Description
This 207-nucleotide RNA was probed chemically with DMS and 2A3.
[RMDB]
RNA sequence: GGGAACGACUCGAGUAGAGUCGAAAAUGACGUUAAACUGCUGACUCAUACAUACUGACACCGGUUGCUCAACAGGCUGUGUGGCACAAUAGAAUAACAAGGCUGUCAAUUUGAGCUUGACGGCUGCAAAACCUGCAGUACUUCGGUACUGCAGGAAGUAUACCUAUAGCUUCGGCUAUAGGUAUACAAAAGAAACAACAACAACAAC
Reactivity to DMS in 0.01 (KOAc 150mM, MgCl2 10mM, bicine 150mM(pH8.5), 24C), signal-to-noise 2, nucleotides 027 to 156: u000g010a110c070g030u000u010a020a060a100c030u000g010c040u000g010a110c050u010c030a090u000a090c060a120u000a110c070u000g000a130c030a100c000c030g000g010u000u000g010c000u000c030a040a070c070a070g000g040c000u000g050u000g060u020g000g040c020a060c060a080a140u000a050g000a100a100u000a070a080c060a100a130g000g000c030u000g030u000c010a030a060u000u000u010g000a160g040c300u000u000g010a030c030g040g010c000u000g030c070a060a030a080a160c000c000u010g000c000a000g030u000a000c000u010u000c280g080g010u000a000c000u000g000c000a000g010g000a000a010
Reactivity to 2A3 in 0.01 (KOAc 150mM, MgCl2 10mM, bicine 150mM(pH8.5), 24C), signal-to-noise 6, nucleotides 027 to 156: u070g020a020c080g020u060u070a090a100a080c040u080g030c020u040g060a080c020u030c060a030u080a120c020a040u110a060c050u070g060a020c020a030c060c030g050g010u060u060g010c030u030c060a040a070c020a050g060g000c030u040g030u020g010u030g100g000c030a010c010a080a100u110a100g100a080a060u120a120a050c070a100a040g060g000c010u000g010u010c000a010a010u060u060u170g030a020g030c000u000u010g000a000c000g020g010c000u010g020c020a030a050a030a090c000c000u000g000c000a000g000u000a000c010u010u070c120g090g000u000a000c000u000g000c000a000g000g000a000a000

The 2A3 profile rests on 5,824 reads.